[RMDB]
RNA sequence: GGGAACGACUCGAGUAGAGUCGAAAAAGGGACACCUGACUCACAUUUUACCAACAGAGUGAGAGUGAGGUUAACCUCUCAUUUCUGUUGGUGAACGCAGAAGUUAGAGGUUGAGAACACUGACAACUGCGUUCAUAGUUGUGAGUCUUCUGUCCCAAAUGCUAGGAUAGUUCGCUAUCCUAGCAUUAAAAGAAACAACAACAACAAC
Reactivity to DMS in 0.01 (KOAc 150mM, MgCl2 10mM, bicine 150mM(pH8.5), 24C), signal-to-noise 2, nucleotides 027 to 156: a030g040g050g010a010c030a030c020c010u000g010a040c000u000c010a070c020a080u010u000u020u010a200c050c020a050a000c020a060g000a070g010u000g010a020g010a010g030u000g000a150g030g020u000u010a140a200c160c000u010c020u010c050a020u010u000u000c000u010g000u000u010g000g000u000g000a010a020c060g000c010a020g000a040a300g000u000u010a020g030a220g020g010u000u000g020a210g020a130a100c020a130c010u000g010a040c020a020a300c010u010g010c020g000u000u010c030a050u000a100g010u010u000g020u000g010a030g000u000c000u000u000c000u010g020u000c000c020c020a000
Reactivity to 2A3 in 0.01 (KOAc 150mM, MgCl2 10mM, bicine 150mM(pH8.5), 24C), signal-to-noise 6, nucleotides 027 to 156: a010g000g000g000a000c010a000c000c040u020g000a000c000u030c000a000c000a020u080u130u100u140a030c010c000a000a000c000a000g010a010g000u010g000a000g000a000g020u150g050a140g090g180u180u170a050a060c030c000u000c000u000c000a020u130u300u040c000u000g000u000u010g000g000u000g000a000a000c000g000c000a010g000a050a000g000u000u010a070g050a160g150g060u060u120g100a060g060a140a000c020a010c030u000g020a000c010a040a000c010u000g000c000g010u010u000c010a000u030a010g110u030u020g000u000g000a000g000u000c000u000u000c000u000g010u000c010c000c000a000